[RMDB]
Record summary:
An RNA of 177 nucleotides, treated with DMS and read out base by base. Reactivities are given for positions 27 through 126. Values are in units of 0.01, from 0 to 300, in steps of 10. DMS adducts were read by reverse transcription with MarathonRT. The RNA was probed in 150 mM KOAc, 10 mM MgCl2 and 150 mM bicine (pH 8.5) at 24 C.
RNA sequence: GGGAACGACUCGAGUAGAGUCGAAAAGAUAUGGACUGUCUCUUGACGAGGUAACGGGAGGAGCGUAUCGGAAACGAUACACUCCUUUGAUCGUUACUACCCACCGUCAAGAGACAGUCCUAAGUCACUUAGAGGCUAGCUUCGGCUAGCCUCUAAGAAAAGAAACAACAACAACAAC
Reactivity to DMS in 0.01 (KOAc 150mM, MgCl2 10mM, bicine 150mM(pH8.5), 24C), signal-to-noise 1, nucleotides 027 to 126: g010a030u010a300u000g030g000a020c010u030g020u000c010u000c000u010u000g050a050c020g010a060g000g010u020a000a000c010g020g000g000a010g000g000a000g010c010g050u000a000u020c000g000g000a120a210a250c000g000a030u010a000c000a020c000u000c000c000u000u000u000g000a080u020c060g010u020u020a000c000u000a030c080c030c110a300c150c070g000u000c000a020a020g000a030g010a000c000a020g000u000c020c000u010a010a020g000u000c030a170